[RMDB]
RNA sequence: GGGAACGACUCGAGUAGAGUCGAAAAGAGCCCGGAGAUGGAUUCUGAGACACGAAUCCAGGCCCUACGGGGCGCAGCAGGCGCGAAAACUCUACAAUGCAGGCAACUGCGAUAGGGGGACAUCGAGCAAUUACCAUGACUUCGGUCAUGGUAAUUGAAAAGAAACAACAACAACAAC
Reactivity to DMS in 0.01 (KOAc 150mM, MgCl2 10mM, bicine 150mM(pH8.5), 24C), signal-to-noise 3, nucleotides 027 to 126: g010a230g030c000c000c030g000g000a110g020a160u000g000g010a000u000u000c000u010g000a200g000a230c180a200c150g010a010a000u000c000c000a050g000g000c020c030c000u020a100c100g000g000g000g000c010g020c090a100g000c130a050g000g010c050g000c020g010a050a060a140a140c010u000c000u000a040c090a160a120u050g020c020a000g010g000c230a080a140c010u010g000c020g000a120u010a010g000g000g000g000g000a180c140a070u000c080g000a100g020
Reactivity to 2A3 in 0.01 (KOAc 150mM, MgCl2 10mM, bicine 150mM(pH8.5), 24C), signal-to-noise 3, nucleotides 027 to 126: g070a040g130c010c020c010g050g050a100g030a080u040g010g000a000u010u000c010u020g050a000g030a080c050a050c210g010a040a010u000c000c000a000g030g020c010c000c000u030a040c160g010g000g000g000c020g000c010a030g030c030a010g030g020c020g000c000g010a050a040a030a030c020u010c000u010a050c080a110a130u250g000c000a000g070g010c040a090a100c070u020g000c010g020a060u090a020g010g000g000g010g020a010c000a070u050c050g010a010g020